[RMDB]
RNA sequence: GGGAACGACUCGAGUAGAGUCGAAAAGUACUUGGUUGCUCUUUACCCAAGGAUGAAUAAACUAAUCUCUCCAGAUAAGAUAUUCACUGCUAUACUUAGACCAGCAGAGAAUUGGGGAAGCUCAUUAAAACCCUAAUUACUUCGGUAAUUAGGGUUUAAAAGAAACAACAACAACAAC
Reactivity to DMS in 0.01 (KOAc 150mM, MgCl2 10mM, bicine 150mM(pH8.5), 24C), signal-to-noise 5, nucleotides 027 to 126: g010u010a050c080u020u000g010g010u010u000g010c030u000c020u010u000u000a170c020c000c010a030a070g000g020a220u000g010a020a020u000a040a120a100c030u010a120a040u000c020u000c190u010c280c210a040g000a060u000a060a070g010a190u000a010u000u000c010a140c010u010g000c020u000a100u010a090c210u000u010a100g010a170c170c120a050g000c000a010g000a170g000a070a110u000u000g010g010g010g000a050a040g010c120u000c030a060u000u000a030
Reactivity to 2A3 in 0.01 (KOAc 150mM, MgCl2 10mM, bicine 150mM(pH8.5), 24C), signal-to-noise 2, nucleotides 027 to 126: g030u040a040c040u110u130g040g000u070u040g070c000u010c000u060u040u220a300c000c000c000a010a010g050g020a060u060g050a040a060u060a070a200a030c070u070a010a130u040c030u000c000u000c030c050a020g020a020u060a060a030g020a050u040a000u030u010c020a030c070u010g000c000u040a050u040a300c030u050u060a050g030a100c030c050a000g010c010a000g010a010g010a050a080u000u020g020g000g020g010a010a010g010c040u030c050a020u070u230a020